This 177-nucleotide RNA was probed chemically with DMS and 2A3. The reactions ran in a buffer of 150 mM KOAc, 10 mM MgCl2 and 150 mM bicine (pH 8.5), at 24 C.
RNA sequence: GGGAACGACUCGAGUAGAGUCGAAAAGCUGGUGAUGGCAUUGCAUCUGAGACUCACCAAGCCACACCAGAGGGUGUCGCUGAUUUCGUACAUCUCCAUUUCCGGGUAUUGCUUAUUCCCACAAGUACCUCACUAAUGACUUCGGUCAUUAGUGAGGAAAAGAAACAACAACAACAAC
Reactivity to DMS in 0.01 (KOAc 150mM, MgCl2 10mM, bicine 150mM(pH8.5), 24C), signal-to-noise 3, nucleotides 027 to 126: g010c000u000g020g020u000g000a150u000g000g010c040a120u000u010g000c080a100u010c060u010g000a130g000a090c080u000c010a090c160c020a020a020g000c010c020a020c000a010c020c010a060g000a100g010g010g000u000g020u000c100g000c140u020g020a100u000u010u010c100g000u010a040c040a040u000c020u010c030c070a080u010u000u010c050c050g020g000g020u000a050u010u000g000c050u000u010a240u010u000c010c000c000a130c180a040a060g020u000a120
Reactivity to 2A3 in 0.01 (KOAc 150mM, MgCl2 10mM, bicine 150mM(pH8.5), 24C), signal-to-noise 2, nucleotides 027 to 126: g010c020u020g000g030u040g070a300u010g130g000c130a230u020u110g010c030a120u040c100u100g080a070g080a190c050u000c080a080c060c020a010a040g010c000c000a010c000a000c000c000a010g050a010g050g040g000u050g020u020c020g000c070u030g070a180u020u100u110c020g030u030a020c000a040u040c030u000c010c010a040u050u050u020c010c000g000g000g010u080a090u040u070g010c000u070u040a040u090u020c020c000c020a030c010a000a040g070u060a090